This 170-nucleotide RNA was probed chemically with 2A3 and DMS.
RNA sequence: GGGAACGACUCGAGUAGAGUCGAAAAUGAUACUAAUCUUAAUAAGUUCAAUAGAGCUAGUUUGCGUCAAAUUUUUGACGUAGCCCCCAUUGAACUCGAAAAUAAAUUCACACCUUUGAGUGUGGAGCAAGCACGGGCUUCGGCCCGUGCAAAAGAAACAACAACAACAAC
Reactivity to 2A3 in 0.01 (KOAc 150mM, MgCl2 10mM, bicine 150mM(pH8.5), 24C), signal-to-noise 2, nucleotides 027 to 129: u060g030a020u050a120c000u030a190a030u000c000u040u100a090a020u250a250a000g000u000u020c000a020a020u030a040g010a000g020c000u020a000g150u000u000u090g000c000g000u000c010a030a040a080u050u290u030u000u020g010a000c010g000u000a000g000c000c000c000c000c000a000u000u000g000a000a020c000u000c110g110a020a020a020a020u110a150a090a000u000u080c040a000c000a000c000c030u100u120u150g050a120g070u000g000u000g000g010a000g010c000a120a000
Reactivity to DMS in 0.01 (KOAc 150mM, MgCl2 10mM, bicine 150mM(pH8.5), 24C), signal-to-noise 1, nucleotides 027 to 129: u080g000a110u050a080c140u010a000a080u000c020u090u050a000a000u050a000a000g000u000u000c000a040a040u000a000g000a080g040c070u080a100g010u020u040u090g000c100g030u000c000a000a000a000u190u100u010u000u000g000a000c000g040u000a030g010c010c000c090c040c160a000u000u080g030a020a000c000u000c210g020a030a070a040a110u130a040a190a110u000u010c000a050c000a070c020c010u110u000u010g020a170g000u040g010u000g000g000a120g000c170a000a090
DMS (dimethyl sulfate) methylates the pairing face of unpaired adenines and cytosines.
For DMS, 3,076 sequencing reads were counted.